[RMDB]
RNA sequence: GGGAACGACUCGAGUAGAGUCGAAAAGAUAUGGAGCCAUGCAAGGUUGCGAACGGAUCGGAAACGAUCCGGAGGUAUAACUGAUGACCAUGGUCUCCUAAGUCAAACUAUGAGUUCGCUCAUAGAACGUUCCCUCGAGGUUCGCCUCGAGGGAACGAAAAGAAACAACAACAACAAC
Reactivity to DMS in 0.01 (KOAc 150mM, MgCl2 10mM, bicine 150mM(pH8.5), 24C), signal-to-noise 1, nucleotides 027 to 126: g000a040u030a260u000g000g060a060g000c030c020a020u010g010c030a120a090g010g080u000u000g000c030g000a140a160c000g020g000a000u000c000g060g000a050a130a130c000g010a000u010c000c000g000g000a010g000g040u030a100u010a000a000c040u000g010a200u010g000a080c300c020a000u010g030g000u000c000u010c000c000u030a000a140g000u000c060a040a010a160c020u000a000u000g000a020g000u010u020c300g000c000u000c000a060u000a020g000a090a220
Reactivity to 2A3 in 0.01 (KOAc 150mM, MgCl2 10mM, bicine 150mM(pH8.5), 24C), signal-to-noise 1, nucleotides 027 to 126: g010a000u090a030u150g020g000a000g000c040c030a000u000g020c000a280a300g080g010u030u180g150c020g060a100a010c040g030g010a000u010c030g030g040a000a060a000c000g010a000u000c030c000g020g010a000g060g120u220a150u090a300a060c090u110g130a300u170g000a240c030c060a020u010g100g030u130c070u060c020c000u000a060a000g000u040c030a030a070a100c020u000a000u040g010a070g070u090u250c300g000c130u030c000a000u000a030g050a000a060
The record gives the reactivity of an RNA of 177 nucleotides to DMS and 2A3. The data come from the RNA Mapping Database (RMDB), library TTRDEL. Reactivities are given for positions 27 through 126. For DMS, 507 sequencing reads were counted. 2A3 is a SHAPE reagent: it acylates the 2'-hydroxyl of flexible nucleotides of all four kinds. Conditions: 150 mM KOAc, 10 mM MgCl2 and 150 mM bicine (pH 8.5), 24 C. For DMS the reverse transcriptase was MarathonRT.